[RMDB]
RNA sequence: GGGAACGACUCGAGUAGAGUCGAAAAGAUAUGGAAUGUCCUCCCCACCGUCGAUCUACCGAAGAACUUCUAGGAUCGGAAACGAUCCUAGAAGGGAGGUAGCAGAGACGAGGGACAUUCCUAAGUCCAGUCUACAACAGUUCGCUGUUGUAGACUGAAAAGAAACAACAACAACAAC
Reactivity to DMS in 0.01 (KOAc 150mM, MgCl2 10mM, bicine 150mM(pH8.5), 24C), signal-to-noise 1, nucleotides 027 to 126: g020a120u030a140u010g000g030a010a010u020g020u000c010c020u010c160c020c000c020a300c090c000g000u010c000g000a300u000c000u000a000c000c000g010a120a240g020a120a230c030u000u000c000u000a010g020g000a020u010c000g010g000a020a030a100c010g000a000u000c010c000u000a010g000a010a000g000g010g000a040g000g000u000a000g020c110a000g040a300g020a000c000g000a160g080g000g000a000c000a010u000u000c000c030u010a010a080g000u000c070
This 177-nucleotide RNA was probed chemically with DMS. Conditions: 150 mM KOAc, 10 mM MgCl2 and 150 mM bicine (pH 8.5), 24 C. For DMS the reverse transcriptase was MarathonRT. Source: RMDB library TTRINS, as collected in RNAgym.